[RMDB]
RNA sequence: GGGAACGACUCGAGUAGAGUCGAAAAGAUAUGGAUCAUCUAUUGAACUACUCCGCUAUCGGAAACGAUAGAUGGAGCAAUAGAGUGAUCCUAAGUCAAAACUCAUUCAUGUUCGCAUGAAUGAGAAGAUAUUAGAUUGGUUCGCCAAUCUAAUAUCAAAAGAAACAACAACAACAAC
Reactivity to 2A3 in 0.01 (KOAc 150mM, MgCl2 10mM, bicine 150mM(pH8.5), 24C), signal-to-noise 9, nucleotides 027 to 126: g010a020u050a020u120g000g000a010u000c000a000u000c010u010a010u010u050g080a270a270c100u140a060c000u300c010c010g000c030u000a000u000c000g000g040a080a020a020c030g000a010u010a010g160a200u180g000g010a010g040c010a000a000u000a010g060a030g150u040g000a000u000c000c000u000a040a010g030u000c020a030a030a050a230c010u010c000a000u010u000c000a010u010g070u080u110c300g030c180a000u000g000a000a000u000g000a000g000a000a030
Reactivity to DMS in 0.01 (KOAc 150mM, MgCl2 10mM, bicine 150mM(pH8.5), 24C), signal-to-noise 8, nucleotides 027 to 126: g000a050u000a290u010g000g000a000u000c000a050u000c000u000a010u000u010g010a120a060c100u020a300c010u000c030c030g010c000u000a000u000c010g010g000a080a060a120c010g010a010u000a000g010a060u000g020g000a000g000c030a010a000u000a010g000a040g020u010g010a010u000c000c000u000a010a080g000u010c030a100a090a130a180c000u000c000a010u000u000c000a010u000g000u010u020c290g030c010a010u000g000a020a000u000g000a000g010a050a060
Background: An RNA of 177 nucleotides, treated with 2A3 and DMS and read out base by base. The data come from the RNA Mapping Database (RMDB), library TTRDES.